[RMDB]
RNA sequence: GGGAACGACUCGAGUAGAGUCGAAAAGAUAUGGAUCUCCAAGGCUUUUGACGACGAUGUAUCGGAAACGAUACUACCGUCGAUAAGCCUGGAGAUCCUAAGUCAAACUCUGCGUUCGCGCAGAGAAGACCCAACUUAACUUCGGUUAAGUUGGGUCAAAAGAAACAACAACAACAAC
Reactivity to 2A3 in 0.01 (KOAc 150mM, MgCl2 10mM, bicine 150mM(pH8.5), 24C), signal-to-noise 2, nucleotides 027 to 126: g050a010u020a040u070g010g020a020u020c000u030c010c060a150a300g010g020c020u200u070u260u300g300a270c160g000a010c020g000a000u100g010u030a000u000c000g020g050a030a030a010c000g000a000u000a010c000u020a030c010c000g040u010c000g000a000u060a020a000g020c010c000u000g000g000a000g010a010u010c000c000u000a000a010g010u000c000a000a010a250c000u000c010u000g020c000g040u050u060c300g000c000g000c150a010g000a000g010a000a000
Reactivity to DMS in 0.01 (KOAc 150mM, MgCl2 10mM, bicine 150mM(pH8.5), 24C), signal-to-noise 2, nucleotides 027 to 126: g000a020u000a230u000g000g020a020u000c000u000c010c010a070a150g010g020c020u020u000u000u000g010a270c100g010a030c020g030a050u000g010u000a020u000c000g010g000a090a050a180c000g000a000u000a020c000u010a080c080c000g000u000c000g000a110u000a020a000g020c010c000u000g000g000a000g000a000u000c000c000u000a000a020g020u000c050a140a120a210c010u000c010u010g000c000g020u000u000c300g070c000g030c000a000g000a000g030a090a060
Annotation: Chemical mapping of a 177-nucleotide RNA with 2A3 and DMS. Values cover nucleotides 27 to 126. The reactions ran in a buffer of 150 mM KOAc, 10 mM MgCl2 and 150 mM bicine (pH 8.5), at 24 C. The data come from the RNA Mapping Database (RMDB), library TTRDES.